The record gives the reactivity of an RNA of 177 nucleotides to DMS and 2A3.
2A3 adducts were read by reverse transcription with SuperScript II with manganese.
Reactivities are given for positions 27 through 126.
Conditions: 150 mM KOAc, 10 mM MgCl2 and 150 mM bicine (pH 8.5), 24 C.

RNA sequence: GGGAACGACUCGAGUAGAGUCGAAAAUACUUGGGAAACUGAGGCAUGAGACUCACUUGAACCCCAGAGGUGGAGGUUGCAGUGAGCCAAGAUUGCGCCACCGCACUCCAGCCUGAGCGACAGAGUGUGCCUUAUUGCCAUUCGUGGCAAUAAGGCAAAAAGAAACAACAACAACAAC
Reactivity to DMS in 0.01 (KOAc 150mM, MgCl2 10mM, bicine 150mM(pH8.5), 24C), signal-to-noise 1, nucleotides 027 to 126: u020a090c030u000u010g000g020g010a170a100a140c020u000g020a080g020g000c100a080u000g010a300g000a080c000u000c000a000c000u000u000g000a050a170c120c000c000c040a180g000a050g000g000u000g010g010a000g010g000u010u000g000c000a060g040u000g000a120g050c000c030a070a090g000a110u000u000g010c110g030c000c000a040c020c010g000c010a070c000u020c010c030a060g020c000c000u000g000a080g030c020g000a090c160a070g000a050g000u000g000
Reactivity to 2A3 in 0.01 (KOAc 150mM, MgCl2 10mM, bicine 150mM(pH8.5), 24C), signal-to-noise 1, nucleotides 027 to 126: u060a000c000u010u000g000g000g050a040a060a000c010u050g000a060g000g000c030a010u130g010a020g000a000c010u020c000a000c010u020u020g020a010a030c000c000c000c040a010g040a010g060g030u010g010g020a080g020g100u120u090g000c020a010g010u010g020a060g020c010c000a060a080g250a160u110u170g020c080g000c040c010a020c060c000g020c010a030c010u050c000c030a110g100c030c000u070g010a100g030c050g050a010c050a070g060a020g140u140g060